RNA sequence: GGGAACGACUCGAGUAGAGUCGAAAAUCGAAAUGCAGAUUAAAUAUGUCAUUAUCACAGGCCAAUGGGAGGUGUUUCACGAAAACCGGGAAAAGCGAAUUUCUGCCUUAUAAACACCGGAAUACAGGAGAUUAGCACAGUUCGCUGUGCUAAUCUCAAAAGAAACAACAACAACAAC
Reactivity to DMS in 0.01 (KOAc 150mM, MgCl2 10mM, bicine 150mM(pH8.5), 24C), signal-to-noise 1, nucleotides 027 to 126: u030c090g000a030a110a020u010g000c040a070g000a050u030u000a090a190a150u010a040u060g020u050c050a050u010u010a080u040c070a100c050a110g010g040c030c070a070a030u010g000g000g000a000g000g000u000g000u020u000u000c130a060c070g010a030a010a100a060c000c010g020g040g000a030a050a110a040g030c070g000a020a120u020u000u060c050u010g000c030c050u040u010a090u010a010a040a020c030a140c030c000g040g020a020a020u020a040c160a060g060
Reactivity to 2A3 in 0.01 (KOAc 150mM, MgCl2 10mM, bicine 150mM(pH8.5), 24C), signal-to-noise 2, nucleotides 027 to 126: u060c020g020a010a000a010u100g010c000a000g010a020u130u130a190a000a090u200a080u090g090u180c000a000u040u100a080u260c030a010c060a030g140g000c010c010a010a120u090g080g010g000a060g000g090u080g040u080u070u040c120a120c040g060a100a000a000a000c000c000g000g000g120a000a300a000a000g000c010g000a020a000u080u110u030c000u000g020c020c010u050u030a140u110a080a110a020c070a030c020c010g000g060a050a000u150a070c110a020g000
Chemical mapping of a 177-nucleotide RNA with DMS and 2A3. The reactions ran in a buffer of 150 mM KOAc, 10 mM MgCl2 and 150 mM bicine (pH 8.5), at 24 C. The 2A3 profile rests on 619 reads. For 2A3 the reverse transcriptase was SuperScript II with manganese. As a SHAPE reagent, 2A3 marks flexible, mostly unpaired nucleotides at the ribose 2'-OH.